Structure probing data (DMS) for a 177-nucleotide construct.
For DMS, 2,096 sequencing reads were counted.
DMS adducts were read by reverse transcription with MarathonRT.
The data come from the RNA Mapping Database (RMDB), library RFMREP.
The reactions ran in a buffer of 150 mM KOAc, 10 mM MgCl2 and 150 mM bicine (pH 8.5), at 24 C.
[RMDB]
RNA sequence: GGGAACGACUCGAGUAGAGUCGAAAAAUAUUGUCCUGUCACAGCAGUAAUGUCACGUAUCUGAAUCGUACUGCUGUCGCGGGACAUUUUCGAAAGACGGGUAUAUAAGUUCGCUUAUAUACCCGUCGAUCAGUACUCCCUUCGGGGAGUACUGAUCAAAAGAAACAACAACAACAAC
Reactivity to DMS in 0.01 (KOAc 150mM, MgCl2 10mM, bicine 150mM(pH8.5), 24C), signal-to-noise 2, nucleotides 027 to 126: a060u000a060u000u000g000u000c010c010u010g000u000c300a030c010a010g000c000a010g000u010a030a090u000g020u010c030a040c120g000u020a080u010c100u000g010a050a090u030c130g020u000a010c000u000g020c000u000g000u000c200g030c000g000g000g000a000c000a000u000u000u000u000c040g000a110a080a180g010a000c010g000g010g010u000a000u000a000u000a000a010g020u000u010c300g020c000u000u010a010u000a010u000a000c010c010c010g010u010c000